[RMDB]
RNA sequence: GGGAACGACUCGAGUAGAGUCGAAAAUAUACAUAAGAAGUCGGCACAGCUCCCGACUCGCGGUGAGCGAUGCUACGUCGCGCGAGCGACGUAGGUGCUGUGCGGACGGCUAGCAAAAGCUAGCCAAAUGGAUGCACUAUUUCGAUAGUGCAUCCAUAAAAGAAACAACAACAACAAC
Reactivity to DMS in 0.01 (KOAc 150mM, MgCl2 10mM, bicine 150mM(pH8.5), 24C), signal-to-noise 3, nucleotides 027 to 126: u020a100u050a180c120a150u120a090a200g000a120a100g030u000c000g010g000c000a050c000a010g000c010u000c020c010c040g050a290c080u020c000g010c030g000g020u090g000a290g000c010g020a030u010g000c040u010a010c000g000u000c010g000c010g010c300g000a220g020c000g010a030c000g020u000a000g010g010u030g010c000u000g000u010g000c000g000g000a010c030g010g030c000u000a000g020c010a140a110a050a170g010c000u010a000g010c000c000a000a080
Reactivity to 2A3 in 0.01 (KOAc 150mM, MgCl2 10mM, bicine 150mM(pH8.5), 24C), signal-to-noise 4, nucleotides 027 to 126: u090a000u050a020c080a040u260a070a120g230a190a020g050u060c080g160g000c010a000c000a010g000c010u050c030c060c020g080a070c020u010c000g000c010g050g140u290g100a040g010c010g020a010u100g090c010u030a020c000g020u000c010g000c020g020c050g060a030g010c000g030a000c010g000u000a000g000g000u030g000c000u000g000u000g010c000g000g000a000c000g000g000c000u010a000g000c000a120a040a300a000g000c010u010a000g000c020c000a020a130